[RMDB]
RNA sequence: GGGAACGACUCGAGUAGAGUCGAAAAGGGCUGCAUGUGUGUGUACAUGUACAUGCAUGUGUGCGUGCACCAUGCACGUGUGUGCUGAUGUACAUGCAUGCAUACAUGUAUGUGUGGGUGUGCACGUGUGCAUUGUGUGCAUAUAUGCACGUUAAUACCGGUAAUCCCAUUUCGAUGGGAUUACCGGAAAAGAAACAACAACAACAAC
Reactivity to 2A3 in 0.01 (KOAc 150mM, MgCl2 10mM, bicine 150mM(pH8.5), 24C), signal-to-noise 1, nucleotides 027 to 156: g080g010g010c010u000g070c020a000u060g000u000g020u010g000u030g080u060a010c000a070u040g000u010a000c000a000u030g060c000a030u000g030u010g010u000g010c020g000u000g000c010a070c000c070a130u300g000c010a040c050g030u160g060u100g000u010g120c000u140g020a020u060g030u070a060c050a020u050g030c000a000u010g040c010a010u010a000c000a000u000g020u060a000u030g000u000g020u040g050g020g020u130g020u000g000c000a000c030g030u010g010u000g000c040a050u060u120g060u030g000u000g000c000a000u030a000u000a000u270g000c000a000c010g010u020u130a130a020u050a170
Overview
The record gives the reactivity of an RNA of 207 nucleotides to 2A3. The RNA was probed in 150 mM KOAc, 10 mM MgCl2 and 150 mM bicine (pH 8.5) at 24 C. The data come from the RNA Mapping Database (RMDB), library OK3TST.